RNA sequence: GGGAACGACUCGAGUAGAGUCGAAAAUAACUCCUCCCGCGAGAGCCGCUAAGGUGGAAACGCUAUGCGGUACUGCCUGAUAGGGUGCUUGCGAGUGCCGCGGGAGGUCUCGUAGAAUAUAACCUAAAUCCAAUGCAUAAUUCGUUAUGCAUUGGAUAAAAGAAACAACAACAACAAC
Reactivity to DMS in 0.01 (KOAc 150mM, MgCl2 10mM, bicine 150mM(pH8.5), 24C), signal-to-noise 8, nucleotides 027 to 126: u010a100a170c140u000c000c010u000c000c000c000g030c010g010a040g000a300g020c000c000g010c010u010a080a110g000g000u000g010g010a090a100a150c010g030c000u000a300u000g000c010g000g010u000a020c010u000g030c000c010u000g010a100u000a210g000g000g030u000g020c000u000u000g010c010g000a030g000u000g010c010c010g000c010g000g010g010a020g010g000u000c010u000c010g000u000a140g010a100a120u010a090u000a110a110c070c040u000a070a120
Reactivity to 2A3 in 0.01 (KOAc 150mM, MgCl2 10mM, bicine 150mM(pH8.5), 24C), signal-to-noise 4, nucleotides 027 to 126: u090a020a030c020u000c030c010u000c000c000c000g000c000g000a020g000a000g020c000c010g000c030u060a140a120g040g000u020g010g020a060a130a010c010g010c020u030a020u180g000c000g000g000u000a010c000u000g000c000c000u040g010a010u020a020g000g010g010u010g000c000u050u130g010c010g010a010g000u010g000c000c000g000c000g000g000g010a000g000g010u000c000u010c000g000u010a040g080a090a120u290a030u070a210a120c040c050u060a160a110
Chemical mapping of a 177-nucleotide RNA with DMS and 2A3. For DMS the reverse transcriptase was MarathonRT. Values cover nucleotides 27 to 126. 2A3 adducts were read by reverse transcription with SuperScript II with manganese.